Overview
The record gives the reactivity of an RNA of 207 nucleotides to DMS and 2A3.
RNA sequence: GGGAACGACUCGAGUAGAGUCGAAAACAGAGCACUUUGAGGGAACAUAACAGGGUCUUGGGAGGCCACAGGAGGAGAGUUGAAAGAUCACAGCCAGGGGCUCAGGGUGUCCACAGGACAAGUACCCUUGGCCAGGCAGUUACGCAAGUGUGGAAAAGGUAAAUUUUACUUUCGAGUAAAAUUUACCAAAAGAAACAACAACAACAAC
Reactivity to DMS in 0.01 (KOAc 150mM, MgCl2 10mM, bicine 150mM(pH8.5), 24C), signal-to-noise 1, nucleotides 027 to 156: c010a090g000a120g010c020a060c090u010u010u000g010a110g000g010g020a040a080c110a140u010a080a090c050a060g000g020g020u000c020u000u000g020g030g010a100g020g020c070c050a100c040a080g030g030a110g040g010a060g010a110g040u000u010g000a060a050a150g040a070u000c050a040c020a100g000c010c010a090g030g030g000g000c040u000c070a090g040g000g000u010g020u000c010c010a240c090a130g020g000a040c010a030a140g020u010a050c010c040c000u010u000g000g000c000c020a120g010g050c010a050g040u000u000a060c100g070c040a050a130g000u010g010u000g000g000a020a030a140a150
Reactivity to 2A3 in 0.01 (KOAc 150mM, MgCl2 10mM, bicine 150mM(pH8.5), 24C), signal-to-noise 3, nucleotides 027 to 156: c050a010g050a020g040c030a020c090u110u100u100g030a040g010g020g010a100a020c020a070u220a120a060c060a100g030g010g000u020c030u050u080g030g010g020a030g000g030c030c030a050c060a040g030g010a010g020g020a030g000a010g020u060u130g060a050a040a000g060a050u090c040a010c040a060g000c010c000a070g160g000g000g000c010u030c040a030g070g040g010u080g020u020c010c030a210c080a200g030g000a010c020a080a010g080u080a090c010c000c000u010u020g010g010c000c010a010g010g020c000a020g050u070u090a030c050g000c030a040a080g030u020g010u040g100g000a080a100a020a030
The 2A3 profile rests on 2,080 reads.